[RMDB]
RNA sequence: GGGAACGACUCGAGUAGAGUCGAAAAGAUAUGGAUCGUCCAUACCAGCGAAGAACUCGGAAACGAGGGAGCUGAUGGCGAUCCUAAGUCAAAGACGUUACGGUGGGUUCGCCCACCGUAACGUCAAGGAAUAAUUUGUCUUCGGACAAAUUAUUCCAAAAGAAACAACAACAACAAC
Reactivity to DMS in 0.01 (KOAc 150mM, MgCl2 10mM, bicine 150mM(pH8.5), 24C), signal-to-noise 1, nucleotides 027 to 126: g010a070u030a300u020g000g000a000u000c010g020u010c000c040a020u010a120c240c000a010g010c010g010a060a190g000a120a190c020u000c000g000g000a140a070a160c000g020a020g000g000g000a060g040c000u000g000a040u000g000g000c020g010a010u000c000c000u000a010a020g010u000c040a040a120a160g020a030c000g040u000u000a000c040g040g000u000g000g000g020u000u030c230g020c010c020c030a010c040c000g000u020a000a000c010g000u000c000a000a050
Reactivity to 2A3 in 0.01 (KOAc 150mM, MgCl2 10mM, bicine 150mM(pH8.5), 24C), signal-to-noise 1, nucleotides 027 to 126: g060a030u060a070u080g000g020a000u030c020g300u210c030c010a020u090a300c150c010a000g030c000g250a300a060g020a070a000c000u000c020g000g050a050a000a060c010g000a010g000g020g000a000g000c000u000g000a020u020g010g000c020g010a000u000c010c000u000a110a030g040u000c020a090a120a090g010a000c000g010u000u000a000c000g000g010u000g080g020g000u060u140c290g110c020c020c000a000c000c050g000u010a000a000c000g000u010c000a000a000

An RNA of 177 nucleotides, treated with DMS and 2A3 and read out base by base. Reactivities are given for positions 27 through 126. The reactions ran in a buffer of 150 mM KOAc, 10 mM MgCl2 and 150 mM bicine (pH 8.5), at 24 C.